[RMDB]
RNA sequence: GGGAACGACUCGAGUAGAGUCGAAAAAUUCACUCGGUGUCACCUCAGCCGGCAGCUGCGUGCCCUUGUGCCGCUGUUGCUAGCAGUGCUGAUCCGGUAGCGGCGCGGCUUUCGGUUACUGAUGUUCGGGUAGCUCAUGGUGCUCAUGUGUCGUGUAGAUUAGGAGGACUUUCGAGUCCUCCUAAUCAAAAGAAACAACAACAACAAC
Reactivity to 2A3 in 0.01 (KOAc 150mM, MgCl2 10mM, bicine 150mM(pH8.5), 24C), signal-to-noise 2, nucleotides 027 to 156: a000u110u050c030a020c000u010c000g080g040u090g020u010c030a050c020c020u040c030a000g000c000c000g050g010c000a010g020c000u050g020c020g170u280g030c030c040c050u200u190g220u300g040c010c000g010c040u040g010u040u010g020c000u070a050g030c050a010g010u110g090c030u020g010a130u020c030c020g020g060u040a020g030c030g070g010c000g010c040g040g000c000u020u070u060c050g000g000u020u060a000c020u060g090a180u080g090u060u120c060g040g040g030u050a010g030c010u030c090a080u140g050g030u050g050c020u060c050a030u120g050u050g050u100c050g050u050g110u120a010